[RMDB]
RNA sequence: GGGAACGACUCGAGUAGAGUCGAAAAGAUAUGGAGUAACAAUGCUCUGUUCAGCGUUGAAAGGGAGGUAGCUUCGGAAACGAAGCUACCUCCCUGGAGCUGACCGAAGAGCUAUACUCCUAAGUCACUGAUUAGAAAAGUUCGCUUUUCUAAUCAGAAAAGAAACAACAACAACAAC
Reactivity to DMS in 0.01 (KOAc 150mM, MgCl2 10mM, bicine 150mM(pH8.5), 24C), signal-to-noise 1, nucleotides 027 to 126: g030a020u010a300u000g000g000a020g010u000a020a160c210a110a110u020g020c000u020c000u000g000u000u000c000a000g020c010g000u010u030g000a300a150a010g010g000g030a020g000g030u000a020g030c020u010u000c010g000g000a080a120a180c040g030a070a000g020c020u000a010c000c000u000c000c020c000u000g000g000a060g020c020u010g040a010c210c120g000a180a030g000a010g030c000u010a100u020a030c020u010c000c000u010a020a090g020u000c040a240